An RNA of 177 nucleotides, treated with 2A3 and DMS and read out base by base.
For DMS, 2,014 sequencing reads were counted.
Conditions: 150 mM KOAc, 10 mM MgCl2 and 150 mM bicine (pH 8.5), 24 C.
RNA sequence: GGGAACGACUCGAGUAGAGUCGAAAAGAUAUGGAAUGAAGUGGUGAUCGACGAAGUCGGAAACGACAGAGAUCCCAUGUGCCUUCGGGAACAUUCCUAAGUCAAAAGCAUUACUUCGGUAAUGCAACCGUCUAUAGUUGUUCGCAACUAUAGACGGAAAAGAAACAACAACAACAAC
Reactivity to 2A3 in 0.01 (KOAc 150mM, MgCl2 10mM, bicine 150mM(pH8.5), 24C), signal-to-noise 4, nucleotides 027 to 126: g020a030u050a040u200g020g020a000a020u020g040a150a050g020u020g040g110u300g060a010u020c020g220a240c070g090a290a020g010u000c000g010g050a100a070a050c010g000a010c030a010g070a000g000a030u010c000c000c010a010u030g030u060g060c030c010u030u050c300g070g000g000a100a060c010a010u010u010c010c010u040a150a050g090u030c060a020a010a070a120g000c000a010u000u020a000c010u040u050c250g140g000u010a000a000u000g000c000a010a020
Reactivity to DMS in 0.01 (KOAc 150mM, MgCl2 10mM, bicine 150mM(pH8.5), 24C), signal-to-noise 3, nucleotides 027 to 126: g000a040u000a300u000g000g030a030a020u010g000a230a210g030u000g000g000u030g010a000u000c000g020a270c170g030a070a090g000u000c000g000g000a090a060a170c000g000a000c000a030g010a210g000a000u010c000c000c000a000u000g010u010g000c020c000u000u000c160g000g020g010a040a300c030a010u000u010c000c010u010a040a180g000u000c050a040a100a130a100g000c000a000u000u000a000c000u000u000c190g020g010u000a000a000u000g000c000a020a050